[RMDB]
RNA sequence: GGGAACGACUCGAGUAGAGUCGAAAACCAAGACAGAACUUUUACUUGUUCAAAUAACAAUUAAGGUGAAGCAGGGUCAGGAACGACGAAUCUCUUUAUGAUAAACAGAUCCAUUUUGCAAGUUCGUUAUUACGGGUAGUUCCUACAAAGGAUCGGACUUGUGGAACAUGUUCGCAUGUUCCACAAGAAAAGAAACAACAACAACAAC
Reactivity to 2A3 in 0.01 (KOAc 150mM, MgCl2 10mM, bicine 150mM(pH8.5), 24C), signal-to-noise 3, nucleotides 027 to 156: c010c000a020a020g070a000c090a030g060a050a020c050u170u190u120u210a050c050u110u050g030u020u050c030a030a050a190u280a080a010c040a020a060u180u150a150a010g030g020u030g080a030a010g040c070a060g040g000g020u050c030a030g030g030a050a040c060g040a020c000g030a080a060u010c030u010c020u100u080u100a090u180g040a020u070a120a090a060c060a050g040a030u030c000c020a040u040u060u070u120g020c020a070a020g010u000u030c020g030u050u040a070u140u110a020c030g000g000g000u020a020g030u010u000c000c000u000a020c040a010a130a020g080g010a070u060c070g000g010a010
Reactivity to DMS in 0.01 (KOAc 150mM, MgCl2 10mM, bicine 150mM(pH8.5), 24C), signal-to-noise 2, nucleotides 027 to 156: c030c010a150a100g010a200c070a100g000a300a040c000u000u000u030u010a080c210u000u000g030u000u000c010a090a090a070u000a130a060c030a080a100u000u030a110a050g000g010u000g030a070a080g030c080a120g040g030g010u010c020a090g030g000a020a060c030g020a070c010g010a060a040u010c010u000c010u000u000u000a170u110g010a100u000a050a060a060c080a080g000a090u000c000c020a220u000u000u000u000g020c030a060a140g010u000u000c000g030u000u000a120u000u000a180c030g020g020g000u000a050g010u000u000c000c000u010a080c080a050a050a130g000g020a100u000c000g000g000a140